[RMDB]
RNA sequence: GGGAACGACUCGAGUAGAGUCGAAAAUAAACCAAAACUAAAACCAACCUUCAAAGUCUCCCUAGUUCCAACGGGUGGCCUUCACUUUGCCAACUUCUGGAACAGCCUGACAGGUCCCAGGACUUGCACUUCUGUUGGGGUGGGGAGGAAGUUGGAACCUAAUACUGAUAUUCGUAUCAGUAUUAGGAAAAGAAACAACAACAACAAC
Reactivity to DMS in 0.01 (KOAc 150mM, MgCl2 10mM, bicine 150mM(pH8.5), 24C), signal-to-noise 1, nucleotides 027 to 156: u020a100a100a300c030c010a040a030a140a170c030u010a030a090a140a090c010c000a030a080c000c030u000u000c020a070a060a260g010u000c030u000c010c000c010u000a090g010u020u010c000c000a030a030c050g020g000g000u010g010g030c020c150u020u010c150a040c120u010u020u010g080c020c020a070a050c040u020u000c060u010g000g000a030a050c020a160g000c010c030u000g000a050c070a070g000g010u000c070c010c040a080g000g000a130c100u010u010g020c030a040c030u000u010c020u000g030u000u000g000g000g000g010u000g000g010g000g000a050g000g010a000a040g000u010u020g000g000a120a190
Reactivity to 2A3 in 0.01 (KOAc 150mM, MgCl2 10mM, bicine 150mM(pH8.5), 24C), signal-to-noise 4, nucleotides 027 to 156: u080a030a010a020c030c010a030a020a040a090c070u140a080a100a020a080c010c010a010a020c030c030u130u100c100a200a190a150g100u030c020u000c010c010c000u060a070g080u140u010c000c000a010a020c020g000g010g030u020g040g010c010c040u190u160c040a110c100u120u190u150g030c010c000a020a040c020u020u040c030u040g020g020a080a050c020a020g020c000c000u060g080a060c040a070g000g050u090c020c020c010a010g050g020a030c040u050u080g020c030a050c070u100u100c010u120g020u000u000g000g000g000g010u030g010g000g010g000a000g000g000a000a020g000u000u000g010g000a000a010